[RMDB]
RNA sequence: GGGAACGACUCGAGUAGAGUCGAAAAGACGCCGAGUGUUAUUACUGUGACGGCGAUGAUUGUCAGUAUGGCGCUACUUGCCUGGGCGAUGAAAUCGUUACCAGUAGGGACGGCUUAUGCCGUGUGGCACGGGUGCGAUGUUCGCAUCGCACCCGUGAAAAGAAACAACAACAACAAC
Reactivity to 2A3 in 0.01 (KOAc 150mM, MgCl2 10mM, bicine 150mM(pH8.5), 24C), signal-to-noise 2, nucleotides 027 to 126: g030a030c000g020c010c070g020a070g000u000g040u140u090a180u090u040a050c040u000g000u060g100a040c090g070g000c090g000a080u080g130a030u030u100g040u010c010a000g050u060a180u090g050g000c000g000c030u130a050c070u160u210g030c000c000u020g000g000g000c070g000a030u160g110a070a070a160u000c000g000u000u000a070c000c000a010g040u150a020g010g060g010a000c020g000g010c060u080u090a030u230g000c000c010g010u090g040u060g050g070
Reactivity to DMS in 0.01 (KOAc 150mM, MgCl2 10mM, bicine 150mM(pH8.5), 24C), signal-to-noise 1, nucleotides 027 to 126: g000a190c120g030c000c000g020a070g000u000g020u000u040a140u060u050a030c000u000g010u000g000a130c050g000g000c010g010a050u000g010a090u010u000g030u020c000a070g060u060a070u000g000g020c010g000c190u000a050c140u010u040g010c000c000u040g000g000g010c000g000a040u010g010a080a080a090u000c000g020u000u030a050c070c050a000g010u000a010g020g000g010a070c000g000g000c000u010u010a190u030g000c000c000g000u000g010u010g000g040